RNA sequence: GGGAACGACUCGAGUAGAGUCGAAAAGGUGGCGUUUCUGCUUCGGUGGAGUAUGCCGUCGCUGCGCUUCGGGUAUCUGACAUUGUGAUUUGUGGUCAUUCCAACUGUGGCGCGAUGACCGCCAUUGCGAUCUUAGGCUAUUCGUAGCCUAAGAUCGAAAAGAAACAACAACAACAAC
Reactivity to 2A3 in 0.01 (KOAc 150mM, MgCl2 10mM, bicine 150mM(pH8.5), 24C), signal-to-noise 3, nucleotides 027 to 126: g070g010u040g010g000c010g000u030u100u010c030u050g020c000u050u060c120g040g020u040g040g070a140g080u180a050u160g010c000c000g020u010c010g000c020u060g000c030g000c010u010u060c050g000g000g070u060a080u090c040u030g030a040c020a120u140u090g080u060g150a170u080u160u230g170u100g030g000u000c010a040u050u050c020c000a080a060c070u110g010u040g100g020c020g000c050g030a060u080g020a020c020c000g000c000c010a040u030u090g020
Reactivity to DMS in 0.01 (KOAc 150mM, MgCl2 10mM, bicine 150mM(pH8.5), 24C), signal-to-noise 4, nucleotides 027 to 126: g010g020u000g010g010c030g020u000u000u010c030u010g020c020u000u000c070g020g030u010g000g010a070g010u010a060u010g010c010c030g010u000c050g010c060u010g010c060g020c040u010u000c100g010g010g010u000a080u010c060u000g020a070c080a100u010u010g010u000g010a110u000u010u000g020u000g020g000u010c030a050u000u000c040c030a070a180c120u000g020u000g000g010c220g010c050g000a070u010g020a070c300c000g000c010c110a050u000u000g020